Source information:
Structure probing data (2A3) for a 207-nucleotide construct. The RNA was probed in 150 mM KOAc, 10 mM MgCl2 and 150 mM bicine (pH 8.5) at 24 C. 2A3 adducts were read by reverse transcription with SuperScript II with manganese. For 2A3, 382 sequencing reads were counted. Reactivities are given for positions 27 through 156.
RNA sequence: GGGAACGACUCGAGUAGAGUCGAAAACAGAUUCACGAGUUCAAAAAGCACGAAUAGCACUUUUUGCUAAAACUCGAUCGGGGUGGCUUGCUAUAGUUACCCCAUCGAAACGAAUCACGGAGAAACACAAUGAAAUCUUGCGAAUAUGUCAACACACCACCAAUCGGUGUUUCGACACCGAUUGGUGAAAAGAAACAACAACAACAAC
Reactivity to 2A3 in 0.01 (KOAc 150mM, MgCl2 10mM, bicine 150mM(pH8.5), 24C), signal-to-noise 1, nucleotides 027 to 156: c010a040g030a020u060u030c010a010c080g080a110g040u140u190c090a070a060a010a010a020g080c050a040c050g110a120a060u040a130g050c040a060c100u080u000u000u070u110g000c050u120a040a000a160a000c010u000c010g010a020u100c080g020g010g000g000u000g000g010c070u050u230g050c140u300a100u100a030g000u000u010a010c000c010c000c020a000u000c000g020a000a040a000c040g030a010a010u040c040a010c090g060g000a040g100a080a160a010c040a000c060a080a200u190g070a080a010a120u170c010u040u110g000c000g000a000a000u100a070u060g090u060c050a000a080c040a000c000a010c160